[RMDB]
RNA sequence: GGGAACGACUCGAGUAGAGUCGAAAAGAUAUGGAGAAGGACUGUGAAGUAAGGUGUCGGAAACGACACUUAUGGAGUCCCUCCUAAGUCAAACUCGUCCAUCAUCGUUCGCGAUGAUGGACGAGAACUCCAACUAGAUCUUCGGAUCUAGUUGGAGAAAAGAAACAACAACAACAAC
Reactivity to DMS in 0.01 (KOAc 150mM, MgCl2 10mM, bicine 150mM(pH8.5), 24C), signal-to-noise 2, nucleotides 027 to 126: g000a050u010a300u000g020g010a010g020a150a110g020g030a010c000u020g010u020g020a090a210g000u010a010a010g020g040u010g010u000c000g010g000a110a100a200c000g000a020c000a000c000u000u000a010u000g000g000a010g010u000c000c000c000u000c000c000u000a020a090g000u000c010a130a100a190c000u000c000g000u000c000c000a010u000c000a000u000c000g000u000u010c170g000c000g020a000u000g000a000u000g000g000a000c000g010a010g010a020a050
Reactivity to 2A3 in 0.01 (KOAc 150mM, MgCl2 10mM, bicine 150mM(pH8.5), 24C), signal-to-noise 3, nucleotides 027 to 126: g030a030u050a020u130g010g040a070g050a280a280g040g020a010c010u100g120u040g300a060a000g000u020a040a050g300g090u040g010u020c010g000g000a090a060a020c000g010a010c000a000c000u010u000a000u020g040g030a020g000u000c010c000c000u000c010c010u030a170a020g050u020c060a040a060a080c000u000c000g020u000c020c000a000u000c000a020u000c000g080u110u070c300g000c040g170a010u040g020a000u000g000g020a000c010g000a000g000a000a000